Conditions: 150 mM KOAc, 10 mM MgCl2 and 150 mM bicine (pH 8.5), 24 C. Structure probing data (2A3) for a 207-nucleotide construct. 2A3 adducts were read by reverse transcription with SuperScript II with manganese. For 2A3, 557 sequencing reads were counted. High 2A3 reactivity points to a flexible backbone, as in loops and unpaired stretches.
RNA sequence: GGGAACGACUCGAGUAGAGUCGAAAACUGGACUGGAGGCCGAGGCAGGCACAUCACUGGAAGUCAGGAGUUUGAGACCAGCUUGGCCAAUAUAUAGUAAAACCCUGUCUCUACUAAAAAUACAGAAAUUAGCCAGGCAUGGUGGCAUGCACCUGCAGCGCUAUAUUUACUUCGGUAAAUAUAGCGCAAAAGAAACAACAACAACAAC
Reactivity to 2A3 in 0.01 (KOAc 150mM, MgCl2 10mM, bicine 150mM(pH8.5), 24C), signal-to-noise 1, nucleotides 027 to 156: c020u070g000g060a020c010u000g010g040a000g040g020c030c070g020a020g030g090c040a020g000g020c050a010c000a030u090c010a010c020u090g040g070a060a030g130u140c010a000g050g000a060g020u060u140u020g080a090g060a000c010c010a000g020c000u010u010g000g050c000c000a050a020u080a020u030a020u040a050g020u060a020a030a050a020c000c010c060u050g030u000c020u020c000u110a040c050u090a130a110a000a000a000u150a050c030a040g060a050a110a100u090u020a030g000c000c030a030g000g000c030a070u010g000g010u000g130g020c040a020u040g000c020a080c000c000u000g000c000a020